The data come from the RNA Mapping Database (RMDB), library RFM100.
The record gives the reactivity of an RNA of 177 nucleotides to DMS.
Values cover nucleotides 27 to 126.
RNA sequence: GGGAACGACUCGAGUAGAGUCGAAAAUAAAUAAUAACGCAGGUGUCCUAAGGGGGGCUCAUUGAGAACAGAAAUCUCAAGUAGAACAAAAGGGUAAAAGUCCCCUUGAUUUUGAUUUUCAGUGUGAUUGGAUGUGUCUAUUCGUAGACACAUCCAAAAAAGAAACAACAACAACAAC
Reactivity to DMS in 0.01 (KOAc 150mM, MgCl2 10mM, bicine 150mM(pH8.5), 24C), signal-to-noise 1, nucleotides 027 to 126: u030a030a040a120u030a180a090u030a060a080c020g010c090a030g030g000u000g000u000c030c080u000a020a070g000g000g020g020g030g020c030u000c030a070u000u000g000a000g000a040a070c140a200g040a150a140a120u000c010u000c020a000a040g010u030a060g000a140a050c050a050a010a100a080g000g000g000u000a060a120a150a070g000u020c000c000c000c000u030u000g000a030u000u060u060u010g000a120u000u000u040u030c010a060g030u000g020u000g010a090
The RNA was probed in 150 mM KOAc, 10 mM MgCl2 and 150 mM bicine (pH 8.5) at 24 C. The DMS profile rests on 1,277 reads.